Conditions: 150 mM KOAc, 10 mM MgCl2 and 150 mM bicine (pH 8.5), 24 C. This 177-nucleotide RNA was probed chemically with DMS and 2A3.

RNA sequence: GGGAACGACUCGAGUAGAGUCGAAAAGAGCUAGGCAGAUGUUGGCAUAGCUGAAUGCAAAUCAGAAAUCGAAAUUCGAAAAGUUUGAAUUUCGCGCGCUCAGCUUCGCCACAUCGUGCCAUGCGAAUCAUCUUUCAAGAUUCGUCUUGAAAGAUGAAAAAGAAACAACAACAACAAC
Reactivity to DMS in 0.01 (KOAc 150mM, MgCl2 10mM, bicine 150mM(pH8.5), 24C), signal-to-noise 9, nucleotides 027 to 126: g000a280g000c010u010a300g010g020c010a100g000a010u000g000u020u010g030g010c000a160u000a010g010c000u010g000a010a020u000g010c010a110a120a120u040c200a160g010a080a130a100u040c010g000a010a010a010u000u000c010g010a040a130a120a180g030u000u000u000g000a020a010u000u000u000c010g010c300g000c020g020c040u000c010a020g000c000u000u000c160g010c000c010a010c000a000u000c000g010u010g010c000c000a070u010g010c000g000a100a120
Reactivity to 2A3 in 0.01 (KOAc 150mM, MgCl2 10mM, bicine 150mM(pH8.5), 24C), signal-to-noise 9, nucleotides 027 to 126: g080a010g000c030u100a090g000g000c000a000g010a000u020g040u300u120g050g000c010a020u050a010g000c000u000g010a010a010u050g000c030a030a050a160u190c070a120g130a100a090a040u120c010g010a010a000a010u020u010c020g080a040a040a120a270g170u110u130u130g000a000a000u000u000u010c020g000c030g000c000g000c020u000c000a000g000c000u030u060c130g000c000c000a000c000a000u000c000g010u030g000c000c000a000u010g000c010g020a010a070
It was measured as part of the RMDB libraries RFM100 and RFMREP.
High DMS reactivity at an A or C suggests that its Watson-Crick edge is free.
Reactivities are given for positions 27 through 126.